[RMDB]
RNA sequence: GGGAACGACUCGAGUAGAGUCGAAAAGCACAAUGGGCGAAAGCCUGAUGCAGCGACGCCGCGUGAGGGAUGACGGCCUUCGGGUUGUAAACCUCUUUCGACAGGGACGAAGCGCAAGUGACGGUACCUCUACCAGCCUUUUCGAAGGCUGGUAGAGAAAAGAAACAACAACAACAAC
Reactivity to 2A3 in 0.01 (KOAc 150mM, MgCl2 10mM, bicine 150mM(pH8.5), 24C), signal-to-noise 3, nucleotides 027 to 126: g050c020a020c020a030a100u210g020g000g000c010g110a090a000a020g040c030c000u050g040a040u090g000c040a010g000c020g060a020c020g000c000c000g030c010g070u050g010a020g020g050g000a020u300g020a050c000g000g020c000c000u040u070c160g090g000g000u010u020g010u030a020a010a020c000c000u020c000u040u080u070c060g030a080c040a110g000g010g050a030c010g010a070a020g020c010g000c060a050a050g050u000g130a040c010g010g060u090a070c000
Reactivity to DMS in 0.01 (KOAc 150mM, MgCl2 10mM, bicine 150mM(pH8.5), 24C), signal-to-noise 3, nucleotides 027 to 126: g000c000a040c070a130a140u010g000g010g000c000g020a110a060a160g000c000c010u000g010a070u050g000c010a090g090c010g000a200c100g000c020c010g050c040g020u010g030a030g040g000g000a090u110g000a230c300g000g010c010c000u000u040c160g000g000g030u000u000g000u000a000a280a300c070c040u000c000u000u060u000c090g010a080c080a040g000g000g000a080c050g030a010a300g000c030g000c080a080a040g000u020g000a200c070g000g000u030a110c140